An RNA of 177 nucleotides, treated with 2A3 and DMS and read out base by base. Values cover nucleotides 27 to 126. The reactions ran in a buffer of 150 mM KOAc, 10 mM MgCl2 and 150 mM bicine (pH 8.5), at 24 C. The DMS profile rests on 1,396 reads. 2A3 is a SHAPE reagent: it acylates the 2'-hydroxyl of flexible nucleotides of all four kinds. The 2A3 profile rests on 2,042 reads. It was measured as part of the RMDB library OK2TRN. 2A3 adducts were read by reverse transcription with SuperScript II with manganese.
RNA sequence: GGGAACGACUCGAGUAGAGUCGAAAAUCCGCGCGGUGAAUAUCGACGGCACUUACCACGUGCUGGAAGCGGCGCGGCAGGCGGGCGUAAGGCGCGUGGCGUUCGCGUCCAGCAUUCACACCGUCGGCCCAUCCCAGGAAUUCGUUCCUGGGAUGGGAAAAGAAACAACAACAACAAC
Reactivity to 2A3 in 0.01 (KOAc 150mM, MgCl2 10mM, bicine 150mM(pH8.5), 24C), signal-to-noise 2, nucleotides 027 to 126: u000c020c010g050c030g000c060g100g000u080g020a140a040u080a050u250c030g030a040c020g010g000c140a010c090u080u130a030c020c000a020c040g010u000g000c000u000g000g020a010a020g000c000g020g020c040g000c010g160g180c030a090g070g240c020g030g110g000c030g100u200a130a070g250g000c070g010c040g060u070g060g000c020g040u160u260c020g050c010g030u000c000c000a020g000c010a040u050u040c020a030c000a010c010c000g010u000c020g000g030
Reactivity to DMS in 0.01 (KOAc 150mM, MgCl2 10mM, bicine 150mM(pH8.5), 24C), signal-to-noise 1, nucleotides 027 to 126: u010c000c010g010c160g000c090g000g000u010g040a100a060u010a080u020c040g000a020c000g000g000c160a090c140u040u000a050c030c050a090c110g000u000g010c010u000g010g000a000a080g020c010g000g010c010g000c000g000g010c160a020g010g000c010g000g000g010c060g000u010a100a180g010g000c020g000c030g000u000g020g000c010g000u000u000c010g010c000g010u000c000c000a060g010c000a040u010u000c040a110c180a100c010c000g000u010c010g010g000